Notes: The record gives the reactivity of an RNA of 307 nucleotides to DMS and 2A3. For 2A3 the reverse transcriptase was SuperScript II with manganese. The RNA was probed in 150 mM KOAc, 10 mM MgCl2 and 150 mM bicine (pH 8.5) at 24 C.

RNA sequence: GGGAACGACUCGAGUAGAGUCGAAAAGUAGUCUGUGUCGUGUGACUCAGUGACAUGACCCUGCUCGUAGCUCACUGAGUCAGCUACGCGUGAGAAGAUCUUACUGUCUCAGGUCUUGCAUGCCACGGGUGAGACAGUAACUCGUGAAAGUUAUAUUCGGAGUUUAUGACUGCAUGCCACUGGACACUCCGAAUCCAGUGCUCACGGGAGCUCAGAAUACAAGAGUUUCAGCAGGAACAGUGAUGUAUUCUUACUGUUACAGACUAGGAGAACAGUUCGCUGUUCUCAAAAGAAACAACAACAACAAC
Reactivity to DMS in 0.01 (KOAc 150mM, MgCl2 10mM, bicine 150mM(pH8.5), 24C), signal-to-noise 8, nucleotides 027 to 266: g010u000a020g010u000c000u000g010u000g010u000c010g040u000g010u000g010a030c020u020c130a120g020u000g000a020c010a020u000g000a020c010c010c010u000g000c010u000c040g020u000a020g010c020u000c070a080c060u010g010a110g010u000c110a000g010c030u000a020c020g010c010g010u000g010a000g000a040a020g000a010u000c020u010u010a040c010u000g000u000c010u000c020a040g010g010u000c000u000u000g010c010a020u000g010c040c300a090c300g000g010g010u010g010a030g000a010c010a020g010u000a020a010c010u000c010g010u020g020a000a040a130g010u010u020a090u020a130u000u000c010g010g000a030g000u000u000u010a050u020g010a120c070u000g010c010a010u000g010c030c010a010c010u000g000g000a030c120a090c130u020c160c210g010a090a300u000c010c010a010g010u000g000c010u000c000a010c010g000g000g000a020g010c000u000c010a060g000a070a090u010a090c120a060a140g000a040g000u000u000u000c000a030g000c020a020g000g000a010a010c000a010g000u000g000a100u010g000u010a100u010u000c060u000u000a020c000u000g010u000u000a020c010a010g000a020c010u000a030g000
Reactivity to 2A3 in 0.01 (KOAc 150mM, MgCl2 10mM, bicine 150mM(pH8.5), 24C), signal-to-noise 9, nucleotides 027 to 266: g070u030a000g000u000c000u000g000u000g000u010c010g010u010g020u020g060a060c050u080c300a130g030u040g110a000c000a010u020g000a010c010c000c010u000g010c010u020c020g020u020a010g000c010u000c040a050c050u080g050a070g210u030c030a000g000c000u020a020c010g020c000g020u000g000a000g000a010a000g000a010u010c010u050u130a090c040u110g080u110c030u020c080a020g020g030u000c000u010u020g000c000a010u010g010c020c050a050c050g010g010g030u030g010a070g010a010c030a040g020u030a020a010c000u010c010g070u060g080a100a080a050g080u160u100a080u040a050u170u100c070g140g050a100g050u060u080u070a120u120g050a020c010u040g000c000a000u000g000c000c000a010c010u010g000g010a020c030a040c190u100c070c050g030a010a010u000c000c000a000g010u000g000c000u000c000a000c000g010g010g000a000g000c000u000c010a020g060a080a050u220a160c030a070a120g010a010g020u000u000u020c010a010g010c000a010g000g010a000a000c000a000g030u030g050a060u110g080u180a210u130u050c030u020u040a010c000u000g000u010u000a000c000a000g000a000c000u000a020g080